RNA sequence: GGGAACGACUCGAGUAGAGUCGAAAAUGUGACAUGUUCGCAUGUCACAAGCCAGGUAGUUCCUAUCUCAAUUACCUGUACUGGCCAUGGUCUGGAUAGGAAAGCUCUACCUAUUCGUAGGUAGAAACGAUGAAACAACAUUCGUGUUGUUUCAUCGAAAAGAAACAACAACAACAAC
Reactivity to DMS in 0.01 (KOAc 150mM, MgCl2 10mM, bicine 150mM(pH8.5), 24C), signal-to-noise 6, nucleotides 027 to 126: u010g010u000g000a010c000a000u000g010u000u010c240g030c010a010u000g010u000c000a000c000a040a080g010c080c000a010g010g010u010a070g000u000u010c010c010u000a010u000c020u000c130a180a120u010u010a020c010c000u000g020u000a070c030u000g000g000c020c020a040u010g010g020u000c190u000g000g000a030u000a010g000g000a020a080a160g010c190u000c000u000a000c000c000u000a020u010u010c130g020u000a010g010g000u000a000g000a020a080a140
Reactivity to 2A3 in 0.01 (KOAc 150mM, MgCl2 10mM, bicine 150mM(pH8.5), 24C), signal-to-noise 7, nucleotides 027 to 126: u060g000u000g000a010c000a000u010g020u010u110c260g010c120a000u000g000u000c000a000c000a010a000g020c000c010a050g070g090u130a060g100u060u020c010c000u010a020u000c090u010c120a110a300u260u100a030c000c000u010g030u080a080c030u030g040g000c020c010a090u170g020g110u080c120u090g020g000a000u010a000g020g000a010a030a010g040c020u000c000u010a000c000c000u000a020u020u070c230g040u020a000g000g000u000a000g000a040a040a010